This 177-nucleotide RNA was probed chemically with DMS and 2A3. Conditions: 150 mM KOAc, 10 mM MgCl2 and 150 mM bicine (pH 8.5), 24 C. Source: RMDB library OK2TST, as collected in RNAgym. 2A3 adducts were read by reverse transcription with SuperScript II with manganese.
RNA sequence: GGGAACGACUCGAGUAGAGUCGAAAAAUGUAAUCAAUGGUUGCAAAGAUACGGCAUGCUUGCUCUGCUAUAAGAGGAACCGACUUACUAGAGUUGAAGCUUCUACCGUUGUCUGUGGUGGAAAACGCGAUAUAUUGUGCUUCGGCACAAUAUAUCGAAAAGAAACAACAACAACAAC
Reactivity to DMS in 0.01 (KOAc 150mM, MgCl2 10mM, bicine 150mM(pH8.5), 24C), signal-to-noise 4, nucleotides 027 to 126: a070u000g020u000a070a050u000c060a050a190u000g010g030u000u000g010c050a050a080a110g000a070u000a070c130g010g010c060a040u000g020c070u000u000g000c020u000c010u000g020c130u010a120u010a060a070g000a080g010g010a080a110c150c010g010a030c020u000u010a010c060u000a070g000a000g010u010u000g010a080a120g010c100u010u010c050u000a080c040c040g020u010u000g000u000c100u010g020u000g000g030u000g000g000a060a030a060a080c190g000
Reactivity to 2A3 in 0.01 (KOAc 150mM, MgCl2 10mM, bicine 150mM(pH8.5), 24C), signal-to-noise 1, nucleotides 027 to 126: a020u040g020u020a050a000u030c120a100a070u180g010g050u060u070g060c040a160a000a050g090a030u070a060c010g060g000c030a020u020g020c000u030u030g040c020u030c020u010g000c050u140a070u050a220a010g000a010g040g050a000a000c070c010g030a020c010u020u060a040c020u060a020g020a000g030u010u050g050a080a020g000c000u010u020c000u020a040c030c020g040u030u060g090u040c200u080g070u050g030g000u020g040g000a040a060a000a030c070g000